RNA sequence: GGGAACGACUCGAGUAGAGUCGAAAAGAUAUGGAAUGUGGGAGUAGGUACACAUUUGCAACGCCCUGAGCUCGGAAACGAGCUCAGGGUAUCAAAUGUUAACCUACGAAGAACACAUUCCUAAGUCCGAAGGACUUACCUUCGGGUAAGUCCUUCGAAAAGAAACAACAACAACAAC
Reactivity to 2A3 in 0.01 (KOAc 150mM, MgCl2 10mM, bicine 150mM(pH8.5), 24C), signal-to-noise 2, nucleotides 027 to 126: g030a010u130a050u190g010g010a020a010u010g000u010g010g050g020a090g030u010a020g000g030u080a040c060a000c000a140u020u010u000g040c130a170a300c170g000c010c020c020u010g010a000g000c000u000c020g020g060a080a180a090c000g020a020g000c000u000c000a000g000g010g010u010a000u000c000a000a010a000u010g000u030u080a040a090c010c000u000a000c000g000a040a000g000a010a030c000a000c000a020u010u000c000c000u010a210a010g090u000c080
Reactivity to DMS in 0.01 (KOAc 150mM, MgCl2 10mM, bicine 150mM(pH8.5), 24C), signal-to-noise 3, nucleotides 027 to 126: g020a130u000a300u000g000g010a010a020u000g020u000g000g000g020a110g000u000a010g010g000u000a210c300a040c010a020u010u000u000g000c300a150a110c210g000c000c000c000u000g010a020g000c000u000c010g000g010a120a060a220c010g010a020g010c000u010c000a000g030g000g010u000a000u020c000a000a020a010u000g010u010u000a300a100c010c000u000a010c000g000a060a130g010a130a200c000a010c000a020u000u000c000c000u000a040a150g000u020c060

The record gives the reactivity of an RNA of 177 nucleotides to 2A3 and DMS. For DMS the reverse transcriptase was MarathonRT. 2A3 is a SHAPE reagent: it acylates the 2'-hydroxyl of flexible nucleotides of all four kinds. High DMS reactivity at an A or C suggests that its Watson-Crick edge is free. The RNA was probed in 150 mM KOAc, 10 mM MgCl2 and 150 mM bicine (pH 8.5) at 24 C. For 2A3 the reverse transcriptase was SuperScript II with manganese. The data come from the RNA Mapping Database (RMDB), library TTRINS.